[RMDB]
Structure probing data (2A3 and DMS) for a 177-nucleotide construct.
Values are in units of 0.01, from 0 to 300, in steps of 10.
The data come from the RNA Mapping Database (RMDB), library OK1LIB.
The DMS profile rests on 1,548 reads.
2A3 adducts were read by reverse transcription with SuperScript II with manganese.
Reactivities are given for positions 27 through 126.
DMS adducts were read by reverse transcription with MarathonRT.
RNA sequence: GGGAACGACUCGAGUAGAGUCGAAAAUAUAUACUAGGUUGGCAUUUUGAGCGCAUCUUACUCAAAUCCUAGUAUUUCCAUUAAUAUCUAAUGAUAUUAAUGAUGCCUCUUAAUAUAAGAGAUGCAAGCUAGAUCUAUCGUUCGCGAUAGAUCUAGCAAAAGAAACAACAACAACAAC
Reactivity to 2A3 in 0.01 (KOAc 150mM, MgCl2 10mM, bicine 150mM(pH8.5), 24C), signal-to-noise 5, nucleotides 027 to 126: u130a000u020a000u000a000c010u010a000g080g010u090u160g110g060c050a080u060u070u030u000g020a020g000c050g010c060a040u030c010u080u090a200c000u000c030a020a030a000u040c000c000u000a000g000u000a000u030u030u020c010c000a000u000u000a000a000u010a000u010c080u160a260a160u300g010a000u010a010u000u010a010a010u010g030a030u070g020c030c000u150c040u120u200a230a130u220a110u060a170a030g030a000g000a030u040g000c020a020a030
Reactivity to DMS in 0.01 (KOAc 150mM, MgCl2 10mM, bicine 150mM(pH8.5), 24C), signal-to-noise 1, nucleotides 027 to 126: u080a070u070a000u000a000c010u030a030g000g020u100u040g000g020c120a060u000u000u000u030g010a000g070c300g010c060a050u020c090u000u000a170c000u000c000a000a000a000u010c020c000u000a030g010u000a000u010u010u010c070c020a010u000u010a000a000u000a010u000c000u010a100a160u130g000a000u000a010u000u010a000a010u000g000a020u010g000c000c000u000c120u010u020a160a140u010a120u060a010a070g000a010g010a020u030g010c010a170a140